This 177-nucleotide RNA was probed chemically with DMS and 2A3. It was measured as part of the RMDB libraries RFM100 and RFMREP.

RNA sequence: GGGAACGACUCGAGUAGAGUCGAAAAUAAAGAUGCCAGUGCCGGGGCCACGCGGAGUACGAUCGAGGGUACAGCACAAGGACGCCCAUUAGGGGAAGAGCUAAAUUUUAGUUUAAGUUAAGUUUAAAUAACGUAGCUAAUUCGUUAGCUACGUUAUAAAAGAAACAACAACAACAAC
Reactivity to DMS in 0.01 (KOAc 150mM, MgCl2 10mM, bicine 150mM(pH8.5), 24C), signal-to-noise 6, nucleotides 027 to 126: u020a020a020a030g010a300u020g000c000c010a060g020u000g010c000c020g030g000g000g020c010c010a010c010g000c020g000g000a170g010u040a020c040g000a060u040c020g000a090g000g000g000u000a010c020a030g000c030a020c010a050a130g000g000a030c020g000c000c010c000a130u030u040a080g010g000g010g020a060a130g000a050g010c030u000a010a050a130u010u020u010u000a060g010u010u000u010a060a130g010u000u000a050a150g010u010u010u010a050a080
Reactivity to 2A3 in 0.01 (KOAc 150mM, MgCl2 10mM, bicine 150mM(pH8.5), 24C), signal-to-noise 4, nucleotides 027 to 126: u150a010a030a000g060a050u300g010c020c010a000g010u000g000c010c000g000g000g000g000c000c000a010c000g040c020g020g020a040g050u300a030c040g030a190u030c020g010a160g030g000g010u020a010c020a000g040c010a000c000a020a010g010g000a000c020g030c010c010c000a050u030u200a080g030g010g010g030a020a020g010a010g010c020u090a070a160a290u180u200u090u140a070g020u000u030u070a090a030g010u050u040a080a040g010u040u030u070a100a160